[RMDB]
RNA sequence: GGGAACGACUCGAGUAGAGUCGAAAAUGGGGAUUAUAAAUAUGGAUUCCACGACGAUGAUGUAUCCAUUUUCAGAUCAGAACGUGGUUUAACUGAGAAUAUCGUUAGAGAAAUUUCUAACAUGAAAGAGCAUCGUUCCAUUCGUGGAACGAUGCUCAAAAGAAACAACAACAACAAC
Reactivity to 2A3 in 0.01 (KOAc 150mM, MgCl2 10mM, bicine 150mM(pH8.5), 24C), signal-to-noise 1, nucleotides 027 to 126: u030g000g000g000g080a130u070u300a280u300a190a140a000u140a280u160g190g000a130u140u020c000c030a000c050g130a000c030g000a020u080g080a110u050g020u140a000u040c000c000a000u000u000u000u000c050a140g080a300u110c000a020g060a000a000c050g090u060g060g000u050u140u000a000a000c000u050g030a000g000a140a000u090a000u230c060g020u000u000a000g130a030g110a000a270a000u150u150u000c000u000a000a000c000a080u060g000a060a010a050